This 177-nucleotide RNA was probed chemically with DMS and 2A3. For 2A3, 956 sequencing reads were counted. 2A3 adducts were read by reverse transcription with SuperScript II with manganese.

[RMDB]
RNA sequence: GGGAACGACUCGAGUAGAGUCGAAAAUGACUGAAGAACAGAAGGCGAUCAAGGCCAAGUAUCCGCCAGUCAAUAGGAAGUACGAGUGUGAAUUUGGAUCAUACAGCAGAUGUCCAUGGAUUGUAUAGCGAUGAUACUACUUCGGUAGUAUCAUCGCAAAAGAAACAACAACAACAAC
Reactivity to DMS in 0.01 (KOAc 150mM, MgCl2 10mM, bicine 150mM(pH8.5), 24C), signal-to-noise 2, nucleotides 027 to 126: u000g000a070c020u000g040a300a090g000a090a090c140a080g030a150a130g000g020c040g010a140u000c200a160a080g000g010c010c040a050a090g000u020a090u000c030c030g010c140c020a060g000u030c010a040a130u000a100g000g000a020a090g000u010a040c090g000a120g000u030g000u000g000a020a110u000u000u000g020g010a010u000c060a090u010a010c020a110g010c040a030g030a110u010g000u000c000c000a000u000g000g010a060u010u010g010u000a060u020a170
Reactivity to 2A3 in 0.01 (KOAc 150mM, MgCl2 10mM, bicine 150mM(pH8.5), 24C), signal-to-noise 2, nucleotides 027 to 126: u080g000a020c030u010g010a040a020g040a100a020c020a030g150a290a100g120g030c050g030a050u160c150a120a060g170g000c010c020a030a000g030u030a110u100c010c000g010c180c000a000g000u000c000a000a060u180a080g000g000a000a090g000u030a020c020g000a040g060u060g020u020g050a070a120u070u080u230g060g020a050u070c010a000u030a160c000a030g020c070a020g090a130u110g000u020c040c000a020u080g110g020a100u070u060g080u100a040u200a030